Chemical mapping of a 177-nucleotide RNA with 2A3 and DMS. Reactivities are given for positions 27 through 126. The data come from the RNA Mapping Database (RMDB), library OK2TRN. The RNA was probed in 150 mM KOAc, 10 mM MgCl2 and 150 mM bicine (pH 8.5) at 24 C.
RNA sequence: GGGAACGACUCGAGUAGAGUCGAAAAGGCCACCACAUGUGAGCUAUAUGAACUGGUUGAGGCCAUGGUGGAGAAGGGCCAGGAUGGUUCCGCUGUGCUUGAGCUUGACCUUUGCAACCGUGAUGUCGCAUGUAGUCGUUUUCGAACGACUACAUGCAAAAGAAACAACAACAACAAC
Reactivity to 2A3 in 0.01 (KOAc 150mM, MgCl2 10mM, bicine 150mM(pH8.5), 24C), signal-to-noise 2, nucleotides 027 to 126: g050g000c040c010a020c020c020a080c020a110u130g040u030g020a100g000c050u040a040u010a040u280g090a110a050c040u080g090g020u050u030g080a060g050g040c070c020a010u050g020g040u050g020g070a050g040a050a050g050g000g000c000c010a020g080g070a080u150g010g000u100u020c000c000g000c040u080g020u020g080c030u030u090g020a030g010c000u000u020g020a030c020c000u030u070u050g010c000a020a020c030c010g000u050g070a100u100g090u050c080
Reactivity to DMS in 0.01 (KOAc 150mM, MgCl2 10mM, bicine 150mM(pH8.5), 24C), signal-to-noise 2, nucleotides 027 to 126: g010g010c020c020a050c060c040a100c070a070u020g010u000g000a130g020c010u010a100u010a100u020g030a080a060c100u000g040g010u000u020g000a130g020g000c020c010a040u000g010g010u000g000g000a100g000a120a090g010g010g000c030c020a110g000g000a040u000g010g000u000u000c040c080g000c060u010g020u010g010c030u000u010g010a110g010c040u020u000g010a100c040c000u000u020u000g000c130a080a120c060c020g000u000g000a110u000g010u020c120